[RMDB]
RNA sequence: GGGAACGACUCGAGUAGAGUCGAAAAAGCUGGUGAUUCUGGCGCGUGAAGCAGGUUACAACAUCGAACCGGAUCAGGUACGUGUGGAAUCGCUGGUGCCUGCUCAUUGCGAAGGCGGCAGCAUCGAUGGAGGUUUUAUGUUCGCAUAAAACCUCCAAAAAGAAACAACAACAACAAC
Reactivity to DMS in 0.01 (KOAc 150mM, MgCl2 10mM, bicine 150mM(pH8.5), 24C), signal-to-noise 2, nucleotides 027 to 126: a090g000c000u000g040g030u000g000a070u000u000c000u010g050g050c040g000c020g010u010g020a100a100g020c040a050g010g000u000u000a070c070a090a120c120a030u010c080g030a140a040c010c010g010g020a140u010c150a050g030g010u000a060c040g020u000g000u000g010g010a120a050u000c070g020c050u010g010g000u000g010c020c000u010g020c040u000c050a050u000u000g020c050g010a280a050g000g010c030g000g010c030a030g000c050a070u020c150g000a220
Reactivity to 2A3 in 0.01 (KOAc 150mM, MgCl2 10mM, bicine 150mM(pH8.5), 24C), signal-to-noise 1, nucleotides 027 to 126: a000g000c030u100g030g300u010g160a090u210u130c000u060g300g070c000g010c040g040u010g060a080a000g000c020a020g080g000u090u150a120c090a170a020c010a080u070c090g000a040a000c000c000g060g140a200u150c070a000g000g040u050a040c020g010u020g020u120g160g100a130a140u050c040g060c130u060g060g040u060g000c010c000u000g000c010u010c020a050u130u240g020c020g030a040a040g020g000c020g000g020c040a000g020c000a060u100c050g050a050